[RMDB]
RNA sequence: GGGAACGACUCGAGUAGAGUCGAAAAGGUUUUAACCCAGUUACUCAAGGUACGCUGGAGUUCUGACCUUUCGAAAGAAAGUGUCAAACGACUUUAAUUUUUGGAACCGCUCUGCUGGGGUCAUCCGACAGAAGUACCAAUUCGUUGGUACUUCUGUAAAAGAAACAACAACAACAAC
Reactivity to DMS in 0.01 (KOAc 150mM, MgCl2 10mM, bicine 150mM(pH8.5), 24C), signal-to-noise 5, nucleotides 027 to 126: g020g000u000u000u000u010a040a130c140c000c010a040g010u000u010a020c010u010c160a120a100g020g010u010a030c250g010c020u000g000g000a090g010u000u000c190u010g010a010c000c000u000u000u000c010g000a110a090a120g010a010a010a010g010u040g010u000c020a020a100a130c150g020a050c070u010u000u010a070a070u010u010u010u010u010g000g020a050a060c080c060g000c020u000c020u000g030c010u000g000g000g000g010u000c020a070u010c000c000g010
Reactivity to 2A3 in 0.01 (KOAc 150mM, MgCl2 10mM, bicine 150mM(pH8.5), 24C), signal-to-noise 9, nucleotides 027 to 126: g030g010u010u020u030u070a020a020c000c000c000a000g010u020u020a010c020u080c220a150a140g210g000u020a030c100g010c020u000g010g010a170g040u030u010c060u060g010a000c000c000u000u000u010c020g040a050a040a020g050a010a030a000g100u140g050u110c040a070a090a040c070g050a010c010u060u130u190a140a190u120u110u070u100u110g070g000a030a030c020c010g000c000u000c000u000g000c000u020g000g000g010g000u000c000a020u010c010c000g000